[RMDB]
RNA sequence: GGGAACGACUCGAGUAGAGUCGAAAACUACCAGAACAGGUCCGACGGUGAGGGACGAAAGCUAGGGGCACGAACCGGAUUAGAUACCCGGGUAGUCCUAGCCGUAAACGAUGCCCGCUAGGUGUCAUUCCCCAACACAUUUCGAUGUGUUGGGGAAAAAAGAAACAACAACAACAAC
Reactivity to DMS in 0.01 (KOAc 150mM, MgCl2 10mM, bicine 150mM(pH8.5), 24C), signal-to-noise 3, nucleotides 027 to 126: c110u010a130c010c030a080g010a060a100c110a120g000g000u000c000c020g050a090c070g000g020u000g020a130g030g000g030a050c010g020a120a090a080g020c030u000a050g030g020g010g010c210a040c050g000a190a300c010c000g010g000a100u010u020a060g010a120u010a080c130c000c000g000g000g000u040a090g010u000c000c000u000a130g000c000c070g000u010a050a090a110c050g000a070u010g000c010c000c070g010c090u040a060g000g000u020g020u020c060a200
Reactivity to 2A3 in 0.01 (KOAc 150mM, MgCl2 10mM, bicine 150mM(pH8.5), 24C), signal-to-noise 2, nucleotides 027 to 126: c020u020a040c000c000a020g020a040a010c000a040g040g000u060c020c000g070a030c090g010g120u110g090a200g010g060g010a060c060g070a080a030a000g020c010u010a000g020g020g060g010c190a010c040g010a030a000c010c000g010g000a000u000u070a060g020a080u040a100c020c000c010g000g020g000u080a000g000u000c000c000u020a000g000c000c000g020u050a000a030a070c050g030a070u110g070c020c020c000g130c130u070a020g020g030u040g030u030c000a000